[RMDB]
RNA sequence: GGGAACGACUCGAGUAGAGUCGAAAACUCGCAGGGUUCGCCCUGCGAGAAAGGCCGAGGUUGUUGCUCGGUUGAAAACAACAACCCUUGGAAACAAGGCAAAAACCCUUACCUUCGGGUAAGGGAACACAUGGAAAUAGUUCGCUAUUUCCAUGUGAAAAGAAACAACAACAACAAC
Reactivity to 2A3 in 0.01 (KOAc 150mM, MgCl2 10mM, bicine 150mM(pH8.5), 24C), signal-to-noise 2, nucleotides 027 to 126: c000u000c000g010c010a000g020g030g040u060u060c080g110c050c000c000u020g000c000g010a000g020a010a010a000g020g040c010c000g010a030g020g070u080u040g030u060u080g050c010u010c030g010g000u010u050g010a010a030a000a030c070a010a000c010a030a070c020c020c010u000u010g030g010a020a050a010c010a010a020g030g020c030a000a010a020a080a130c010c000c010u000u000a000c010c010u030u070c290g110g000g000u000a000a010g000g000g000a010a000
Reactivity to DMS in 0.01 (KOAc 150mM, MgCl2 10mM, bicine 150mM(pH8.5), 24C), signal-to-noise 5, nucleotides 027 to 126: c010u000c000g020c010a020g000g010g030u000u010c190g010c010c000c000u000g010c010g000a000g020a020a070a120g000g000c000c000g010a040g010g010u000u000g010u000u010g000c030u000c040g010g010u010u010g000a060a040a070a070c070a060a070c070a060a090c190c010c020u000u020g000g000a180a080a210c030a010a030g000g010c250a040a040a100a100a070c010c010c010u000u000a010c000c000u000u010c250g000g010g010u000a000a000g000g000g000a010a040